Annotation: An RNA of 177 nucleotides, treated with DMS and 2A3 and read out base by base. For DMS, 1,383 sequencing reads were counted. For 2A3, 1,002 sequencing reads were counted. The reactions ran in a buffer of 150 mM KOAc, 10 mM MgCl2 and 150 mM bicine (pH 8.5), at 24 C.
[RMDB]
RNA sequence: GGGAACGACUCGAGUAGAGUCGAAAAGAAAGAAAGCGUUAUCUGAUGAGCAAUAACUUUCGCCCCUAGCUGAAAAAUGAUACUUCUCAUGUUGAAUGCGAGAUUGGUCUUACUGAAAAUAACGGAAGCAACGAACUCAAUUCGUUGAGUUCGUUGCAAAAGAAACAACAACAACAAC
Reactivity to DMS in 0.01 (KOAc 150mM, MgCl2 10mM, bicine 150mM(pH8.5), 24C), signal-to-noise 1, nucleotides 027 to 126: g000a020a040a040g060a030a100a040g020c180g060u000u020a010u000c010u000g000a070u030g000a100g060c020a070a120u040a050a060c120u010u020u000c010g000c070c000c000c090u000a130g000c030u000g000a050a140a080a000a000u000g000a040u010a090c060u040u020c000u000c000a060u030g000u040u000g000a060a000u000g010c040g000a060g000a100u010u000g020g090u030c050u020u000a090c040u040g000a100a040a060a030u020a130a100c060g000g010a060a180
Reactivity to 2A3 in 0.01 (KOAc 150mM, MgCl2 10mM, bicine 150mM(pH8.5), 24C), signal-to-noise 2, nucleotides 027 to 126: g010a000a110a000g040a080a060a020g130c010g030u060u100a140u080c080u100g120a060u120g050a120g050c020a090a140u070a090a070c000u020u000u000c020g000c000c000c000c000u020a010g090c010u070g070a100a020a000a000a000u080g020a000u000a180c010u110u020c000u000c040a070u260g070u200u040g170a300a120u070g020c100g000a060g000a020u010u100g000g000u010c010u020u060a170c030u030g010a020a030a070a070u130a150a000c070g020g030a010a050